[RMDB]
RNA sequence: GGGAACGACUCGAGUAGAGUCGAAAAAGCCGGUCAGUUUUACUGGGGCGGUAUCCUCCCAAAGAGUAACGGAGGAGCGCGAAGGUGGGCUCAGCCCGGUUGGCAACCGGGUGUCGAGUGCAUGGGCACUCACGUAGGCUUUCGAGCCUACGUGAGUAAAAGAAACAACAACAACAAC
Reactivity to DMS in 0.01 (KOAc 150mM, MgCl2 10mM, bicine 150mM(pH8.5), 24C), signal-to-noise 4, nucleotides 027 to 126: a140g020c000c010g040g000u000c010a060g010u000u020u010u020a040c020u000g000g000g010g020c000g000g020u020a050u010c060c030u010c000c020c120a110a100a140g010a130g000u020a070a120c200g000g000a050g020g010a040g000c050g010c050g000a110a080g010g020u010g000g000g000c030u010c080a220g000c010c000c010g000g010u000u000g010g010c150a180a250c020c010g000g000g010u010g000u030c130g000a050g000u010g000c050a050u030g010g000g020c070
Reactivity to 2A3 in 0.01 (KOAc 150mM, MgCl2 10mM, bicine 150mM(pH8.5), 24C), signal-to-noise 4, nucleotides 027 to 126: a000g000c010c000g020g110u050c030a030g010u000u110u180u300a050c010u030g020g000g020g070c000g020g010u040a100u030c010c020u020c010c010c000a070a140a020g190a020g060u080a080a050c060g020g000a000g000g010a030g010c090g010c010g070a070a030g030g010u060g010g030g000c000u000c010a000g000c000c000c000g000g020u020u040g050g040c040a040a010c000c000g020g000g010u040g030u040c070g000a010g010u060g030c020a050u020g000g050g010c010

Structure probing data (DMS and 2A3) for a 177-nucleotide construct. The reactions ran in a buffer of 150 mM KOAc, 10 mM MgCl2 and 150 mM bicine (pH 8.5), at 24 C. Values cover nucleotides 27 to 126.